Structure probing data (2A3 and DMS) for a 177-nucleotide construct. For DMS the reverse transcriptase was MarathonRT.
RNA sequence: GGGAACGACUCGAGUAGAGUCGAAAACUGGCGGAGGACACUGGUAGCCGGGCAGUUUGACUGGGGCGGUACGCGCUUGAAAAGAUAUCGAGCGCGCCCCAAGAUUUCCUCACCCGCGUCGGAGACGUCAUAUUCGUUGAUUCGUCAACGAAUAUGAAAAAGAAACAACAACAACAAC
Reactivity to 2A3 in 0.01 (KOAc 150mM, MgCl2 10mM, bicine 150mM(pH8.5), 24C), signal-to-noise 9, nucleotides 027 to 126: c010u020g060g000c020g020g040a110g060g040a040c030a030c140u130g120g010u050a030g030c020c000g000g010g000c010a020g010u020u040u060g050a040c030u020g010g000g000g010c040g030g040u150a080c110g010c000g000c020u010u010g030a040a080a040a030g200a100u200a070u140c010g000a000g000c010g000c000g000c000c000c000c000a010a000g000a010u030u030u020c010c010u050c030a070c000c020c010g010c010g030u030c020g030g040a050g010a030c020g030
Reactivity to DMS in 0.01 (KOAc 150mM, MgCl2 10mM, bicine 150mM(pH8.5), 24C), signal-to-noise 9, nucleotides 027 to 126: c030u000g000g000c050g010g010a110g000g020a070c090a080c100u010g020g020u010a100g020c040c020g000g000g010c060a030g010u000u000u000g010a180c080u010g010g000g010g010c190g010g010u030a100c230g000c010g000c010u000u000g000a020a110a140a210g010a160u040a080u010c000g000a000g000c000g010c010g000c010c000c000c010a020a020g000a120u000u000u010c010c000u010c120a190c090c010c030g000c040g010u000c020g000g000a110g010a070c100g010

Reactivities are given for positions 27 through 126. The reactions ran in a buffer of 150 mM KOAc, 10 mM MgCl2 and 150 mM bicine (pH 8.5), at 24 C.